[RMDB]
RNA sequence: GGGAACGACUCGAGUAGAGUCGAAAAGCUGUUUGGCCACAACAUGCCAUGGCUGAACGUUGCCCCCUGAAGGCGCGCGAAUCGCCGCCUGAGCCACGAUUUCGCUGGUUGGCUGCGGCUCGGCUGGGAGAUGACUAAUAUUCGUAUUAGUCAUCUCAAAAGAAACAACAACAACAAC
Reactivity to 2A3 in 0.01 (KOAc 150mM, MgCl2 10mM, bicine 150mM(pH8.5), 24C), signal-to-noise 9, nucleotides 027 to 126: g040c040u050g010u020u010u010g030g000c010c000a050c040a140a120c070a160u220g060c060c020a050u030g010g000c010u020g010a010a000c020g300u300u130g050c040c000c000c000c030u070g100a130a020g090g000c040g000c010g000c010g100a100a060u100c030g000c010c000g000c000c000u050g030a020g000c010c010a050c030g060a100u100u250u220c080g020c140u040g050g000u070u060g020g000c010u020g010c010g010g000c010u010c020g040g000c020u070g040g090
Reactivity to DMS in 0.01 (KOAc 150mM, MgCl2 10mM, bicine 150mM(pH8.5), 24C), signal-to-noise 9, nucleotides 027 to 126: g010c020u010g020u000u000u000g010g010c010c020a040c130a100a130c140a080u010g010c100c090a210u000g000g000c010u000g000a010a020c020g010u010u000g010c040c030c010c060c080u010g010a120a080g000g010c040g010c110g020c030g010a060a070u010c030g020c010c050g010c010c020u010g010a070g010c010c020a040c050g000a280u000u010u010c100g020c140u000g020g010u000u000g010g000c020u000g000c030g000g000c050u000c030g010g010c030u000g010g010